[RMDB]
RNA sequence: GGGAACGACUCGAGUAGAGUCGAAAACCAGCUUGCCUGUGUCCUAGGGAAUUGGAAGGUCAUCCUUCACAGGAUCGUGUGGAAGUCCUGCUCGGGGCGGAAGAAUUAAAACCAUUCGAGCUAGUCAAAAACCGGCUGAUCUUCGGAUCAGCCGGAACAUACUACAACAGUUCGCUGUUGUAGUAUGAAAAGAAACAACAACAACAAC
Reactivity to 2A3 in 0.01 (KOAc 150mM, MgCl2 10mM, bicine 150mM(pH8.5), 24C), signal-to-noise 6, nucleotides 027 to 156: c000c000a000g030c050u070u150g060c000c010u040g010u030g030u100c020c050u090a090g000g020g070a120a140u150u130g060g040a080a020g030g040u140c040a110u120c020c020u060u080c030a030c010a020g040g020a070u090c080g030u090g000u040g110g020a060a040g030u030c010c000u020g020c020u020c020g040g010g000g000c060g010g010a090a020g050a030a040u170u150a060a040a020a060c020c010a020u040u100c010g020a010g010c060u080a020g070u110c060a040a020a010a100a120c000c010g000g000c010u000g000a010u000c000u020u050c170g020g000a000u000c000a000g000c010c000g000g000a000a000
Reactivity to DMS in 0.01 (KOAc 150mM, MgCl2 10mM, bicine 150mM(pH8.5), 24C), signal-to-noise 2, nucleotides 027 to 156: c010c010a150g010c080u010u000g030c030c000u000g000u000g010u000c040c020u010a090g020g020g000a080a150u000u010g010g020a090a080g020g020u000c030a100u010c000c010u000u000c060a090c060a100g010g000a040u000c060g000u000g050u000g010g020a050a090g010u000c030c010u000g000c000u000c060g010g020g010g000c050g000g020a140a090g000a090a080u010u010a080a080a140a110c000c010a130u000u010c000g030a060g040c020u000a070g000u010c030a050a080a090a120a200c000c010g040g060c010u010g010a020u010c000u010u000c300g030g000a030u000c000a020g030c000c000g000g000a000a020